[RMDB]
RNA sequence: GGGAACGACUCGAGUAGAGUCGAAAAUCAUGUUUGUUCGCAAACAUGAAAAGAAAGCACGAAAAUAAAAUAAAAGGGUAGGGAACGUGCACCCACCCAUAAAAACGCACGUGUUCGCACGUGCGAAGACCAUGAAAAUGUUCGCAUUUUCAUGGUCAAAAGAAACAACAACAACAAC
Reactivity to 2A3 in 0.01 (KOAc 150mM, MgCl2 10mM, bicine 150mM(pH8.5), 24C), signal-to-noise 2, nucleotides 027 to 126: u020c010a000u000g000u000u020u000g050u020u030c140g010c090a000a010a000c010a010u030g000a040a030a000a020g070a040a040a000g000c010a000c060g120a050a170a070a150u140a030a050a080a020u210a040a090a020a030g000g000g000u050a060g040g010g010a090a030c010g000u000g000c010a020c010c010c010a000c000c000c000a000u130a000a080a010a010a000c010g020c010a000c000g000u010g040u020u030c200g020c100a000c000g010u010g000c000g000a000a010
Reactivity to DMS in 0.01 (KOAc 150mM, MgCl2 10mM, bicine 150mM(pH8.5), 24C), signal-to-noise 1, nucleotides 027 to 126: u000c000a010u040g020u000u000u000g030u000u000c160g060c000a000a000a000c010a000u000g000a000a120a070a170g010a070a070a130g000c000a000c000g000a280a080a060a080u050a050a020a010a020u000a080a120a060a110g010g010g000u000a050g000g000g000a080a070c010g000u000g000c000a250c000c010c010a030c010c000c000a130u000a120a030a030a030a080c000g030c000a010c000g020u000g000u000u010c210g010c040a000c030g000u000g000c000g000a010a050

Conditions: 150 mM KOAc, 10 mM MgCl2 and 150 mM bicine (pH 8.5), 24 C. The record gives the reactivity of an RNA of 177 nucleotides to 2A3 and DMS. DMS adducts were read by reverse transcription with MarathonRT. The 2A3 profile rests on 2,643 reads. For 2A3 the reverse transcriptase was SuperScript II with manganese. Reactivities are given for positions 27 through 126. It was measured as part of the RMDB library M2PK50.